[RMDB]
This 177-nucleotide RNA was probed chemically with DMS and 2A3.
2A3 adducts were read by reverse transcription with SuperScript II with manganese.
The RNA was probed in 150 mM KOAc, 10 mM MgCl2 and 150 mM bicine (pH 8.5) at 24 C.

RNA sequence: GGGAACGACUCGAGUAGAGUCGAAAAGAGCAUGUCUUCGGACAUGCUCAAACGAGAAUCGGCAAAUAAGCCGAUCCCAGGCGAUCGUACGCCAUACUCGAAAAAGUAUAGUCUUCGGACUAUACAAUCUGUUUACUGAGUUCGCUCAGUAAACAGAAAAAGAAACAACAACAACAAC
Reactivity to DMS in 0.01 (KOAc 150mM, MgCl2 10mM, bicine 150mM(pH8.5), 24C), signal-to-noise 2, nucleotides 027 to 126: g000a000g010c000a000u000g020u010c000u000u000c210g050g000a030c010a000u000g000c000u000c010a030a010a140c050g000a060g030a270a090u000c000g030g010c010a110a060a250u010a130a110g000c000c000g000a000u000c030c010c030a170g000g010c000g000a050u010c300g020u000a130c030g020c010c040a050u000a010c030u030c040g000a070a070a080a210a110g010u000a000u010a000g040u000c000u000u010c210g050g010a010c000u000a000u000a000c000a050a020
Reactivity to 2A3 in 0.01 (KOAc 150mM, MgCl2 10mM, bicine 150mM(pH8.5), 24C), signal-to-noise 2, nucleotides 027 to 126: g000a000g000c010a010u000g000u010c030u040u110c300g040g000a000c000a000u010g000c000u000c000a000a010a000c020g000a000g000a030a030u000c000g010g000c050a050a100a300u250a300a030g010c000c000g010a000u000c000c010c000a000g000g000c000g050a090u130c130g130u190a110c030g000c000c010a050u090a040c010u000c020g050a160a100a020a000a000g000u000a000u000a010g010u000c000u020u080c260g090g000a000c010u030a000u000a000c010a000a040

For DMS, 950 sequencing reads were counted. The data come from the RNA Mapping Database (RMDB), library M2PK50. The 2A3 profile rests on 2,956 reads.